[RMDB]
Background:
An RNA of 177 nucleotides, treated with DMS and 2A3 and read out base by base. DMS adducts were read by reverse transcription with MarathonRT. Source: RMDB library RFM100, as collected in RNAgym. Reactivities are given for positions 27 through 126. The RNA was probed in 150 mM KOAc, 10 mM MgCl2 and 150 mM bicine (pH 8.5) at 24 C. Reactivities are rounded to 0.1 and cut off at 0 and 3.
RNA sequence: GGGAACGACUCGAGUAGAGUCGAAAAACUCCGGUACGCCGGAGAAUGGUGCUGUGCUCUGACCUACUAACUUGGCCUUACUAACCCCAUUUUCUUACUAACCCCAGCCCUGCCGAGCUCUGGGCAAUUAGAAAUACUCCUUCGGGAGUAUUUCUAAAAAAGAAACAACAACAACAAC
Reactivity to DMS in 0.01 (KOAc 150mM, MgCl2 10mM, bicine 150mM(pH8.5), 24C), signal-to-noise 2, nucleotides 027 to 126: a100c010u000c000c010g010g010u010a080c140g030c000c000g020g000a010g000a000a050u010g020g010u010g000c020u010g000u030g000c050u000c020u000g000a100c020c010u000a060c050u010a100a060c110u020u000g000g020c020c020u000u020a090c060u010a110a160c040c010c000c010a100u020u020u030u000c030u020u030a090c180u000a130a150c050c040c010c030a100g000c040c020c010u000g000c050c070g000a050g000c080u010c050u020g020g000g000c050a040a080
Reactivity to 2A3 in 0.01 (KOAc 150mM, MgCl2 10mM, bicine 150mM(pH8.5), 24C), signal-to-noise 4, nucleotides 027 to 126: a000c020u010c000c000g000g010u050a040c220g040c030c000g010g000a020g030a000a060u090g030g000u050g030c020u060g020u050g030c010u000c020u040g050a060c030c000u030a070c030u040a090a060c020u050u060g030g010c010c000u010u050a050c030u060a050a090c000c000c010c020a030u080u050u050u040c040u060u070a100c060u060a030a060c000c000c010c020a000g010c010c000c010u020g010c040c010g040a030g000c030u010c010u050g040g020g000c000a000a030